[RMDB]
RNA sequence: GGGAACGACUCGAGUAGAGUCGAAAAUCCAGUACGUUCGCGUACUGGAAAAGUCGCGGCUUGAGGGCGUGUACCGCAGCGCACACACACGACCCUCAAGCCAAAGUCCGUACUUCGGUACGGACAAGUCUUCGAAGUAGUUCGCUACUUCGAAGACAAAAGAAACAACAACAACAAC
Reactivity to 2A3 in 0.01 (KOAc 150mM, MgCl2 10mM, bicine 150mM(pH8.5), 24C), signal-to-noise 3, nucleotides 027 to 126: u000c000c000a000g000u010a000c020g010u020u040c230g010c000g100u010a000c000u000g000g050a020a010a000a010g090u070c060g010c060g110g040c000u000u000g020a000g010g000g000c010g000u000g010u040a070c000c080g040c060a070g110c050g090c060a010c000a000c000a000c000a000c020g300a300c020c000c000u010c000a000a000g010c000c010a000a000a000g000u000c000c000g000u000a010c000u010u060c190g100g010u000a000c000g020g000a000c000a000a010
Reactivity to DMS in 0.01 (KOAc 150mM, MgCl2 10mM, bicine 150mM(pH8.5), 24C), signal-to-noise 2, nucleotides 027 to 126: u000c000c000a010g000u000a000c000g020u010u020c230g010c010g020u000a000c000u010g040g000a000a010a030a070g010u010c100g000c260g010g030c000u010u000g000a020g010g000g010c010g000u000g000u000a040c160c110g000c110a050g000c130g030c100a030c130a040c080a110c020a030c000g000a110c010c000c000u000c000a000a010g010c000c010a010a030a070g010u000c000c000g010u000a000c000u000u010c150g070g010u010a000c000g000g000a000c010a020a070
The record gives the reactivity of an RNA of 177 nucleotides to 2A3 and DMS. For 2A3 the reverse transcriptase was SuperScript II with manganese. The data come from the RNA Mapping Database (RMDB), library M2PK50. For DMS the reverse transcriptase was MarathonRT. The DMS profile rests on 1,730 reads. Reactivities are given for positions 27 through 126.